[RMDB]
This 177-nucleotide RNA was probed chemically with DMS and 2A3. Reactivities are given for positions 27 through 126.
RNA sequence: GGGAACGACUCGAGUAGAGUCGAAAAGACGCCUAAUGGCGAAAAUGUAAAAUCAACUACACAGCAGAUAAAUACAAGUGCUAAAUCUCGAAACUAGUUGAUCUAGUCCAGCGGUGAGAUCCGCAGAAGUACGAGUGGGAUUCGUCCCACUCGUACUAAAAGAAACAACAACAACAAC
Reactivity to DMS in 0.01 (KOAc 150mM, MgCl2 10mM, bicine 150mM(pH8.5), 24C), signal-to-noise 2, nucleotides 027 to 126: g000a250c010g020c000c000u030a230a190u060g020g000c000g000a010a150a190a070u040g010u020a070a100a080a020u000c020a000a110c020u000a000c180a050c190a070g000c180a000g000a010u000a010a040a100u020a010c150a170a070g000u030g000c210u000a020a070a110u000c020u000c100g010a170a110a150c150u000a000g000u000u000g020a030u000c000u000a110g050u030c010c020a020g000c000g000g020u000g000a110g000a010u070c000c010g000c040a050g000a150
Reactivity to 2A3 in 0.01 (KOAc 150mM, MgCl2 10mM, bicine 150mM(pH8.5), 24C), signal-to-noise 2, nucleotides 027 to 126: g000a050c000g050c020c090u210a220a090u250g000g010c030g020a010a010a010a010u150g020u160a030a030a030a030u030c000a000a040c000u040a010c100a020c020a010g020c020a060g020a120u030a070a020a020u220a050c080a070a220g040u000g210c000u010a100a090a090u000c030u010c060g050a030a000a000c080u000a000g000u000u000g020a030u020c030u010a000g000u000c000c190a040g000c020g000g000u000g010a040g040a040u020c010c000g000c020a000g060a010
Conditions: 150 mM KOAc, 10 mM MgCl2 and 150 mM bicine (pH 8.5), 24 C.